[RMDB]
Record summary: The record gives the reactivity of an RNA of 177 nucleotides to 2A3 and DMS. Reactivities are given for positions 27 through 126. The DMS profile rests on 8,106 reads. It was measured as part of the RMDB library OK2TRN.
RNA sequence: GGGAACGACUCGAGUAGAGUCGAAAAAAGUUCAGUGCCCGCAGAUUCGGCAGCACGUGACGGGUGACGACCAGGCCUGCCGUUUCUGGCAGCAGCUCCUUGAGUAGCUCGACGGUCAGCGUGUGCGCCCCAUGUUAUACUUCGGUAUAACAUGGGGAAAAGAAACAACAACAACAAC
Reactivity to 2A3 in 0.01 (KOAc 150mM, MgCl2 10mM, bicine 150mM(pH8.5), 24C), signal-to-noise 4, nucleotides 027 to 126: a010a000g070u090u050c060a020g050u020g160c040c020c020g000c020a030g020a170u110u100c020g050g000c010a030g040c030a020c130g040u070g070a070c040g030g020g050u080g050a050c050g030a040c000c040a040g060g010c010c000u010g000c000c000g030u040u090u060c060u070g020g010c010a000g010c010a010g000c030u050c000c020u080u100g060a040g030u080a010g020c010u010c050g080a070c060g040g060u040c030a020g050c020g020u060g020u040g030c030g030
Reactivity to DMS in 0.01 (KOAc 150mM, MgCl2 10mM, bicine 150mM(pH8.5), 24C), signal-to-noise 6, nucleotides 027 to 126: a070a070g020u000u000c060a110g010u000g010c010c020c050g020c090a080g000a090u020u000c050g010g020c040a090g010c060a060c060g010u000g010a090c070g010g010g010u000g010a120c090g010a080c060c030a110g000g000c250c020u000g010c000c000g010u000u000u010c060u010g010g020c040a040g010c090a100g010c050u000c040c080u010u010g000a120g020u000a080g010c030u000c040g010a120c080g010g010u000c040a070g010c050g010u000g010u000g010c090g010